[RMDB]
RNA sequence: GGGAACGACUCGAGUAGAGUCGAAAAGUCUGAAGUGCAAUGUUAUAUUGAGGAUGUGGGUUUCAGUAACAUACUAAUAACACUUGACAAAACAAGCACCAAAGGUGAACUGAUCUGGAAAUUUUCUCUGGACAACACAAGCAACAUAGCUGGCAGCCCCUUCGAUAAGGUUCGCCUUAUCGAAGGGAAAAGAAACAACAACAACAAC
Reactivity to 2A3 in 0.01 (KOAc 150mM, MgCl2 10mM, bicine 150mM(pH8.5), 24C), signal-to-noise 2, nucleotides 027 to 156: g040u000c090u100g040a080a010g030u000g000c030a030a080u030g030u100u090a120u050a070u140u180g020a060g020g020a010u050g090u040g070g030g110u030u030u180c050a060g000u060a090a010c000a060u120a020c040u090a060a080u080a180a020c020a020c050u070u110g020a040c040a090a090a030a030c050a060a040g050c000a030c030c060a080a060a000g120g040u010g000a020a020c030u030g030a080u070c000u050g030g080a100a090a130u150u150u140u020c050u010c010u040g020g020a030c020a100a040c020a000c030a090a040g040c000a000a050c020a080u050a020g000c040u020g040g000c040a050g030c000
Chemical mapping of a 207-nucleotide RNA with 2A3.
Conditions: 150 mM KOAc, 10 mM MgCl2 and 150 mM bicine (pH 8.5), 24 C.
It was measured as part of the RMDB library OK3TST.